[RMDB]
RNA sequence: GGGAACGACUCGAGUAGAGUCGAAAAGCGAGUUUGUUCGCAAACUCGCAAAGAAAGCUCGAGCGUAGGGAACCCAAACCACGCUCGAGCAAGGGACCCAAAAAAUCUACGGCUUCGGCCGUAGAAAGAUCAGUUAUACCUUCGGGUAUAACUGAUCAAAAGAAACAACAACAACAAC
Reactivity to DMS in 0.01 (KOAc 150mM, MgCl2 10mM, bicine 150mM(pH8.5), 24C), signal-to-noise 1, nucleotides 027 to 126: g020c010g000a000g020u000u000u000g000u000u010c180g040c000a000a000a050c000u000c000g000c000a000a030a070g000a090a110a090g000c000u000c010g010a000g000c010g030u010a130g020g000g000a140a180c030c040c070a070a150a200c010c000a030c000g010c000u000c000g010a000g010c000a020a010g010g000g010a140c020c000c000a030a060a070a120a040a140u000c000u010a020c010g000g000c000u010u000c190g030g000c010c000g000u000a000g000a040a040a050